[RMDB]
RNA sequence: GGGAACGACUCGAGUAGAGUCGAAAAGAUGACAUUAGGCUUCUAAAGGACAUACAUUUAAUAUUUCUGUGGAAAUAUGAGGAAAAUCCAUGGUUAUCUGAGAUAGGAGAUACAAACUUUGUAAUUCAACGUGUCAUUACUUCGGUAAUGACACGUUAAAAGAAACAACAACAACAAC
Reactivity to DMS in 0.01 (KOAc 150mM, MgCl2 10mM, bicine 150mM(pH8.5), 24C), signal-to-noise 2, nucleotides 027 to 126: g010a110u020g010a060c040a150u000u000a050g030g010c030u000u000c010u010a080a090a160g000g020a070c120a040u010a100c020a100u030u000u000a100a060u020a040u000u000u000c000u020g010u020g010g010a020a010a020u000a020u000g000a080g010g010a040a120a070a110u000c000c000a080u000g010g000u000u000a060u010c020u000g000a150g000a090u000a060g010g030a040g010a100u010a040c150a030a070a100c180u010u000u010g010u000a030a170u000u010c130
Reactivity to 2A3 in 0.01 (KOAc 150mM, MgCl2 10mM, bicine 150mM(pH8.5), 24C), signal-to-noise 1, nucleotides 027 to 126: g000a000u030g010a000c060a030u070u170a060g170g040c000u030u000c020u110a050a050a090g080g000a010c000a020u270a010c010a050u200u270u040a220a020u070a050u010u010u040c020u000g220u190g170g000a050a000a000u050a040u080g110a120g000g020a030a030a000a010u000c010c010a030u050g000g000u030u090a090u120c040u060g000a020g030a080u060a080g110g000a000g010a010u000a120c040a080a080a110c070u220u160u060g040u140a060a210u000u120c010
Conditions: 150 mM KOAc, 10 mM MgCl2 and 150 mM bicine (pH 8.5), 24 C. The record gives the reactivity of an RNA of 177 nucleotides to DMS and 2A3. 2A3 adducts were read by reverse transcription with SuperScript II with manganese. The DMS profile rests on 1,246 reads. The data come from the RNA Mapping Database (RMDB), library OK2TST. For 2A3, 508 sequencing reads were counted. Values cover nucleotides 27 to 126.